[RMDB]
RNA sequence: GGGAACGACUCGAGUAGAGUCGAAAAUUGCUCAGGCAGCGUAACGCUGCUUGAAAGACCACAUGAAAGUCAUGGCGGGUUAAGCGCCGCCAGGCGGGGUUCGGAGGCGCCUGGCAACAGAAGCCUCAUUACAUGGAAGACUUCGGUCUUCCAUGAACUAGAUCAAAGUCUUCGGACUUUGAUCUAGAAAAGAAACAACAACAACAAC
Reactivity to 2A3 in 0.01 (KOAc 150mM, MgCl2 10mM, bicine 150mM(pH8.5), 24C), signal-to-noise 2, nucleotides 027 to 156: u070u100g000c010u000c010a000g000g000c000a000g010c010g050u120a090a090c250g000c000u020g010c000u000u000g000a000a000a000g050a020c030c000a040c000a070u300g050a210a100a000g030u000c020a280u060g000g010c000g070g020g000u070u230a120a170g030c060g060c020c010g010c000c000a000g000g010c010g000g010g000g000u170u300c170g050g000a000g000g000c000g000c000c010u010g070g000c000a010a000c010a010g030a020a000g000c000c000u010c010a010u020u080a020c000a010u000g000g000a000a010g000a000c000u000u060c290g050g000u000c000u000u000c000c000a000u000g000a000a010